[RMDB]
RNA sequence: GGGAACGACUCGAGUAGAGUCGAAAAGGUCAGAAGAAAAACGGCAAGCAUGUCUGACAUUAGGUGCCGACAUCGCCAUUAACUAUCACACUGAAGAUUUUGUCACCGAAACCAAGCGAGCCACCGCUCGCCUUGGUACGUUCGCGUACCAAGGCGAAAAAGAAACAACAACAACAAC
Reactivity to DMS in 0.01 (KOAc 150mM, MgCl2 10mM, bicine 150mM(pH8.5), 24C), signal-to-noise 6, nucleotides 027 to 126: g010g010u000c010a040g000a090a110g010a090a080a080a090a110c120g010g020c030a070a170g020c100a060u000g000u000c010u010g020a030c010a090u000u000a120g010g010u000g020c030c030g000a030c080a040u000c050g020c130c050a040u010u000a040a080c100u000a070u010c130a080c140a060c110u010g000a080a090g000a100u000u010u000u000g010u000c020a050c010c010g010a060a060a100c050c030a070a050g010c020g010a120g000c020c050a090c170c110g010c090
Reactivity to 2A3 in 0.01 (KOAc 150mM, MgCl2 10mM, bicine 150mM(pH8.5), 24C), signal-to-noise 4, nucleotides 027 to 126: g040g010u030c020a020g030a020a050g130a030a210a030a050a050c050g030g020c040a010a030g010c020a030u100g030u030c020u020g020a010c010a020u030u210a040g060g010u050g020c010c000g030a020c010a010u020c020g030c030c000a040u130u080a090a040c050u110a100u290c040a030c030a030c170u050g050a110a030g030a150u040u040u020u090g000u010c020a010c020c020g010a010a010a010c020c010a040a000g000c010g010a000g010c000c010a020c010c030g060c030

The record gives the reactivity of an RNA of 177 nucleotides to DMS and 2A3. It was measured as part of the RMDB library OK2TST. The RNA was probed in 150 mM KOAc, 10 mM MgCl2 and 150 mM bicine (pH 8.5) at 24 C. Reactivities are given for positions 27 through 126.